[RMDB]
RNA sequence: GGGAACGACUCGAGUAGAGUCGAAAAGGAUCCUUCCUAGUCAGGAAGGUAACUGCCUCGUGUACAGUUACCUCUGACUAGGUUGGUUGUCAUUGUACACGAGGAUGGCAAGGUGUAUUUAGGAUCGCUAGUACUGAGUAUUCGUACUUAGUACUAGAAAAGAAACAACAACAACAAC
Reactivity to DMS in 0.01 (KOAc 150mM, MgCl2 10mM, bicine 150mM(pH8.5), 24C), signal-to-noise 9, nucleotides 027 to 126: g000g000a020u000c000c000u000u000c000c000u000a010g010u000c010a010g010g010a170a040g010g010u000a000a010c010u000g010c100c030u010c260g010u010g020u010a200c010a010g000u000u000a010c000c000u000c000u000g000a010c000u000a010g000g010u000u000g000g000u000u000g010u000c070a050u000u000g010u000a030c060a050c070g010a120g000g010a080u000g000g010c080a060a060g010g010u000g010u000a050u000u000u000a030g020g010a020u000c020g000
Reactivity to 2A3 in 0.01 (KOAc 150mM, MgCl2 10mM, bicine 150mM(pH8.5), 24C), signal-to-noise 9, nucleotides 027 to 126: g030g000a010u010c000c000u010u020c000c000u020a010g010u020c010a010g040g230a250a040g010g000u010a010a000c000u010g030c010c020u120c130g130u150g030u080a050c010a000g000u000u000a000c000c000u000c000u010g000a000c010u020a010g010g000u000u020g010g000u000u010g010u000c040a030u010u060g060u070a030c050a020c080g080a070g160g040a090u100g100g010c060a050a030g110g030u090g010u060a100u040u090u060a020g010g000a010u010c010g000